RNA sequence: GGGAACGACUCGAGUAGAGUCGAAAAGCGACAUCAUUUUCCAAAUUAUCCACUUCUAGCAGCCAAACAAACAUGGCCCGACGAUUGCUAGCAUAUCCCGGUGUGCCACAGAAUACAGAGGCGGAUGAACACUACACAGAUCAACUUAACAAGAAGAAGUAUGCCGUACUUUCGAGUACGGCAUACUAAAAGAAACAACAACAACAAC
Reactivity to 2A3 in 0.01 (KOAc 150mM, MgCl2 10mM, bicine 150mM(pH8.5), 24C), signal-to-noise 2, nucleotides 027 to 156: g090c010g100a100c030a150u070c020a020u070u080u160u040c100c020a120a100a160u180u150a100u030c050c020a080c060u130u040c010u060a090g000c030a010g000c020c000a110a120a070c060a050a110a030c050a120u050g010g000c000c020c000g070a060c040g050a040u000u100g020c040u030a010g040c000a000u020a040u080c000c010c030g000g040u120g000u030g040c000c000a070c010a040g160a130a010u200a180c020a030g020a010g030g000c010g000g030a020u090g070a060a000c040a000c100u060a040c090a020c000a040g090a090u020c010a000a090c070u110u100a060a000c020a040a080g140a010a020g050a040